This 207-nucleotide RNA was probed chemically with DMS and 2A3. The reactions ran in a buffer of 150 mM KOAc, 10 mM MgCl2 and 150 mM bicine (pH 8.5), at 24 C. DMS adducts were read by reverse transcription with MarathonRT.

RNA sequence: GGGAACGACUCGAGUAGAGUCGAAAAUGCUUCAGGGCAUACUCCACUUCCUCUCAAGCCUGCACCACACAACUCCUCAAAUCUGGUUUCAGUAUCACUGUUACCAUGUCUUGAGUCGAGUCUUUGGAAGGCACAGGACAGGUGUGCUUGUGGAUGACUCAUUACCUCCAUUCGUGGAGGUAAUGAGAAAAGAAACAACAACAACAAC
Reactivity to DMS in 0.01 (KOAc 150mM, MgCl2 10mM, bicine 150mM(pH8.5), 24C), signal-to-noise 1, nucleotides 027 to 156: u010g030c040u000u000c060a170g020g000g000c030a070u000a140c030u030c040c010a080c040u000u000c010c000u040c040u000c080a120a170g000c000c010u000g040c060a160c050c020a110c150a070c060a010a030c000u030c000c100u000c010a020a020a070u000c130u000g030g000u000u000u000c010a020g000u010a210u000c150a070c000u000g020u000u000a000c000c010a010u030g020u000c070u010u020g000a010g010u010c180g010a030g000u000c000u020u000u010g070g010a120a070g010g030c000a070c080a020g070g000a070c190a160g010g000u000g060u020g010c040u010u000g000u000g060g020a190u000g000a300
Reactivity to 2A3 in 0.01 (KOAc 150mM, MgCl2 10mM, bicine 150mM(pH8.5), 24C), signal-to-noise 3, nucleotides 027 to 156: u040g010c010u060u140c120a150g030g020g040c010a030u050a090c040u040c030c010a040c020u060u000c020c000u030c010u020c080a090a040g030c000c000u050g020c070a070c010c000a040c000a020c020a050a000c000u010c010c000u000c000a010a050a050u030c020u020g000g000u010u000u000c000a010g020u070a150u280c150a050c050u010g000u010u010a010c000c000a030u180g030u010c080u070u000g000a000g010u050c080g060a000g000u020c040u100u100u050g030g000a070a030g020g000c030a010c010a030g030g040a040c040a050g070g010u010g020u030g050c070u070u070g060u040g070g010a060u080g080a060